[RMDB]
RNA sequence: GGGAACGACUCGAGUAGAGUCGAAAACUGUAUGGGUUUAUGAGUCCCAACAACUGGGUAGUGAAGACAACCCAGGGCUGUGUGUUGAUGGUUCCGCUGCAGACAGUCAAGGCUCACUUCUCUGGGAGGAAGCUAAAUGCCACUCAGAGACACAUCAUACGAAAAUAGCUUUCGAGCUAUUUUCGUAAAAAGAAACAACAACAACAAC
Reactivity to 2A3 in 0.01 (KOAc 150mM, MgCl2 10mM, bicine 150mM(pH8.5), 24C), signal-to-noise 1, nucleotides 027 to 156: c040u060g080u170a170u160g060g030g040u120u110u080a090u150g040a010g000u030c020c030c050a020a040c040a000a040c010u020g020g000g000u110a150g050u190g040a160a040g060a130c010a060a070c000c010c000a000g030g020g000c010u000g000u030g000u000g000u040u030g060a180u100g040g200u070u060c070c090g060c000u040g000c010a020g000a110c000a010g010u080c030a020a040g070g010c010u040c040a010c010u080u020c000u010c000u000g020g020g020a090g030g050a060a130g000c080u150a140a080a070u210g010c000c000a010c000u000c000a000g020a000g010a010c000a000c000a080u190c010a040